RNA sequence: GGGAACGACUCGAGUAGAGUCGAAAAGUUUCUAAGUUCGCUUAGAAACAAAUCCAGCGCGGAAACGAACGUGCCUGACCCUAUUCGUUAAAGAUUUUCAUAAAACGUUCCUCUUCGGAGGAACGAAUCAACACAUUUUCUUCGGAAAAUGUGUUGAAAAAGAAACAACAACAACAAC
Reactivity to DMS in 0.01 (KOAc 150mM, MgCl2 10mM, bicine 150mM(pH8.5), 24C), signal-to-noise 2, nucleotides 027 to 126: g020u000u000u000c010u000a000a000g000u000u020c220g040c010u000u000a010g000a010a000a010c000a020a080a070u010c080c120a090g000c060g060c010g030g000a090a070a040c170g020a060a120c020g020u000g020c030c070u000g020a100c060c030c050u010a120u000u010c030g040u000u020a070a120a120g010a150u020u000u000u000c040a100u000a040a060a090a180c020g010u000u000c000c000u000c000u000u020c230g020g010a010g000g000a000a000c000g000a020a040
Reactivity to 2A3 in 0.01 (KOAc 150mM, MgCl2 10mM, bicine 150mM(pH8.5), 24C), signal-to-noise 2, nucleotides 027 to 126: g000u000u000u030c000u010a020a000g000u010u060c120g020c070u000u020a000g030a010a030a010c000a000a090a010u030c060c030a030g000c000g000c010g040g080a180a090a030c030g010a050a030c000g030u000g020c020c020u040g060a080c030c010c010u040a140u030u080c030g020u020u110a110a030a060g070a250u060u090u070u120c090a090u200a170a090a010a050c000g000u000u000c030c010u010c000u000u050c230g110g020a010g000g020a000a000c000g000a000a010
The record gives the reactivity of an RNA of 177 nucleotides to DMS and 2A3. The DMS profile rests on 1,424 reads. The 2A3 profile rests on 2,326 reads. DMS adducts were read by reverse transcription with MarathonRT. For 2A3 the reverse transcriptase was SuperScript II with manganese. Reactivities are given for positions 27 through 126.